Chemical mapping of a 207-nucleotide RNA with 2A3 and DMS.
The RNA was probed in 150 mM KOAc, 10 mM MgCl2 and 150 mM bicine (pH 8.5) at 24 C.
Values cover nucleotides 27 to 156.
Values are in units of 0.01, from 0 to 300, in steps of 10.
For DMS the reverse transcriptase was MarathonRT.
[RMDB]
RNA sequence: GGGAACGACUCGAGUAGAGUCGAAAAUGGAUGGGAUCGUGCCCAGCUUUGCUUAGCUUUCUUUAUUUCUGCAAAUCUGUUAGCAUAAUUCCAAGGUGGCCAAGCAGAUGUCACAUGGAGUUAGUCAAAGCACAAAGUCACGAUUCCACAAUGGAGACUCAUUUAAUGAGUUCGCUCAUUAAAUGAGAAAAGAAACAACAACAACAAC
Reactivity to 2A3 in 0.01 (KOAc 150mM, MgCl2 10mM, bicine 150mM(pH8.5), 24C), signal-to-noise 6, nucleotides 027 to 156: u160g090g070a060u020g000g000g000a000u000c000g010u000g010c000c030c020a020g000c010u000u000u020g010c030u080u090a080g000c020u060u100u040c040u060u300u120a210u080u210u050c130u170g120c070a040a070a150u060c080u110g030u100u050a020g010c010a030u030a080a040u050u030c020c000a030a090g040g000u010g010g000c010c030a150a020g030c050a080g060a220u120g050u040c010a000c000a010u020g000g000a010g000u010u020a030g020u090c020a000a010a000g000c010a010c020a150a080a010g030u070c000a010c010g000a000u010u000c010c010a010c020a030a040u090g070g000a090g010a020
Reactivity to DMS in 0.01 (KOAc 150mM, MgCl2 10mM, bicine 150mM(pH8.5), 24C), signal-to-noise 2, nucleotides 027 to 156: u000g000g010a150u000g000g010g010a040u000c020g040u000g020c060c030c020a130g010c050u000u000u010g020c020u010u010a120g020c030u010u010u000c000u020u010u010a060u040u000u000c090u020g000c190a050a050a060u000c040u000g030u000u000a110g010c010a070u010a030a070u000u000c050c070a060a190g000g040u000g030g040c040c160a100a160g000c130a130g010a090u000g000u000c030a020c060a120u000g010g010a020g010u000u000a010g000u000c030a030a020a030g020c030a130c050a030a050a040g010u000c010a040c020g010a070u000u010c000c000a020c060a050a100u010g000g000a220g000a220